[RMDB]
RNA sequence: GGGAACGACUCGAGUAGAGUCGAAAAGGGCUUGACGCAUCGCCCGAAUAGGAUGCAUGUGCUUUUGCACUAAGAUAAAUGUCCGUAUCGUAGGGGACAUAGAACCUACUCAUUAAUGUCCGAAGAGUCUGGGACGAUCAUCAGGCGAGACUAAGAAACUCCCGAUUUAUUUCGAUAAAUCGGGAGUAAAAGAAACAACAACAACAAC
Reactivity to DMS in 0.01 (KOAc 150mM, MgCl2 10mM, bicine 150mM(pH8.5), 24C), signal-to-noise 2, nucleotides 027 to 156: g000g020g020c010u000u000g020a040c030g040c090a020u010c020g020c000c000c000g000a070a130u000a130g030g030a030u000g000c110a140u020g000u000g010c050u000u030u010u000g060c000a040c010u000a070a100g000a090u000a060a100a070u000g000u000c030c020g010u000a090u010c080g000u000a180g020g030g000g050a110c050a050u010a120g000a070a220c020c030u010a100c040u020c040a130u000u000a090a070u000g000u000c000c020g030a130a100g020a110g030u010c060u020g020g050g010a030c000g010a070u000c010a020u000c050a020g010g000c000g010a110g000a040c050u000a020a040g000a130a100
Reactivity to 2A3 in 0.01 (KOAc 150mM, MgCl2 10mM, bicine 150mM(pH8.5), 24C), signal-to-noise 2, nucleotides 027 to 156: g090g000g000c020u000u000g020a010c040g000c010a030u020c000g030c010c010c000g010a010a050u060a010g050g000a010u060g010c100a060u070g040u010g010c010u040u090u200u300g000c000a000c010u010a030a080g040a150u170a100a140a020u070g010u020c030c000g050u040a040u090c070g010u010a020g060g010g000g000a000c030a020u100a040g130a020a000c040c000u020a020c020u060c050a010u040u110a190a050u160g080u000c040c030g040a100a050g050a060g070u050c100u090g000g000g090a110c030g040a040u030c000a010u010c000a000g070g000c050g000a030g000a040c070u100a090a040g000a180a110